[RMDB]
RNA sequence: GGGAACGACUCGAGUAGAGUCGAAAAUUUUGUGAAAGUGAUUCAAUAUCAUAAGGAAGAAUGUCUAAUUCUGGUCUUGUAUAAGAUAGUUUAUCCUUUACCCAAAUAUAAUGAUUACCUAUAUAUGUAAUAAUCAUUUCAUCUAUCAACGUAUAGCUCUAGUACCUAAAUUCGUUUAGGUACUAGAAAAAGAAACAACAACAACAAC
Reactivity to DMS in 0.01 (KOAc 150mM, MgCl2 10mM, bicine 150mM(pH8.5), 24C), signal-to-noise 2, nucleotides 027 to 156: u000u000u000u000g010u010g010a060a050a150g020u020g020a060u020u020c080a050a100u010a040u000c040a050u000a050a060g000g020a070a190g010a060a030u000g020u010c100u000a060a070u000u000c020u010g000g020u020c020u000u000g020u000a090u010a110a130g000a070u000a060g010u000u000u000a110u000c000c010u000u000u000a100c010c020c010a040a030a120u000a110u010a050a050u000g000a070u010u010a010c010c040u010a130u010a220u010a110u010g000u020a060a070u000a020a030u000c000a010u000u010u000c050a090u000c090u000a050u000c090a050a130c090g020u000a050u000a050g010c190
Reactivity to 2A3 in 0.01 (KOAc 150mM, MgCl2 10mM, bicine 150mM(pH8.5), 24C), signal-to-noise 3, nucleotides 027 to 156: u050u060u050u040g030u010g050a050a040a040g130u150g030a020u110u070c070a030a060u040a040u130c020a020u040a030a000g030g000a010a050g000a040a000u050g040u120c050u080a110a050u060u030c020u050g150g000u020c020u060u030g030u030a070u030a170a050g000a010u050a020g030u000u110u070a020u060c020c000u070u040u090a170c010c010c000a040a050a040u150a040u050a120a030u050g010a010u020u030a040c000c030u110a040u160a110u070a060u300g020u050a060a130u050a070a010u070c000a000u000u050u140c040a050u010c020u140a060u080c040a050a100c040g040u120a060u070a080g060c040
Record summary: This 207-nucleotide RNA was probed chemically with DMS and 2A3. DMS adducts were read by reverse transcription with MarathonRT. Values cover nucleotides 27 to 156. Reactivities are rounded to 0.1 and cut off at 0 and 3. The reactions ran in a buffer of 150 mM KOAc, 10 mM MgCl2 and 150 mM bicine (pH 8.5), at 24 C. It was measured as part of the RMDB library OK3TST.